[RMDB]
RNA sequence: GGGAACGACUCGAGUAGAGUCGAAAAUGAUCGCGAUCGCCAAGUAACCCCGGACCUCGAUUGUGAACUGUGCGACGGGUUUUCGGCGUGUUGCGUCGUGAGAUUCACGUUCGGCGUCAAUCGGCCACACCGAAGUACGAUUCGUCGUACUUCGGUGAAAAGAAACAACAACAACAAC
Reactivity to DMS in 0.01 (KOAc 150mM, MgCl2 10mM, bicine 150mM(pH8.5), 24C), signal-to-noise 3, nucleotides 027 to 126: u060g030a020u050c020g010c000g020a040u000c020g000c010c030a060a160g040u010a040a020c070c000c000c000g010g030a120c270c070u000c070g000a170u010u100g090u020g010a100a130c110u040g000u040g050c050g000a180c250g000g000g000u000u030u010u010c200g000g010c060g010u000g020u020u000g000c010g000u000c000g000u030g040a180g000a100u020u020c030a020c030g020u010u000c030g010g000c160g020u010c040a070a070u020c060g020g000c060c090a250
Reactivity to 2A3 in 0.01 (KOAc 150mM, MgCl2 10mM, bicine 150mM(pH8.5), 24C), signal-to-noise 6, nucleotides 027 to 126: u080g010a030u120c050g000c010g040a030u040c000g020c010c010a080a050g060u080a030a020c040c000c000c000g040g030a090c010c030u040c060g170a250u120u230g090u120g120a130a110c090u090g050u090g090c000g010a040c050g000g000g000u010u020u060u080c010g000g000c000g010u080g020u030u060g020c010g000u010c000g000u020g030a100g030a060u070u050c010a010c090g040u060u070c060g070g040c040g030u030c050a050a110u030c030g050g000c040c020a050
Structure probing data (DMS and 2A3) for a 177-nucleotide construct. Values cover nucleotides 27 to 126. DMS adducts were read by reverse transcription with MarathonRT. The reactions ran in a buffer of 150 mM KOAc, 10 mM MgCl2 and 150 mM bicine (pH 8.5), at 24 C. The 2A3 profile rests on 4,454 reads.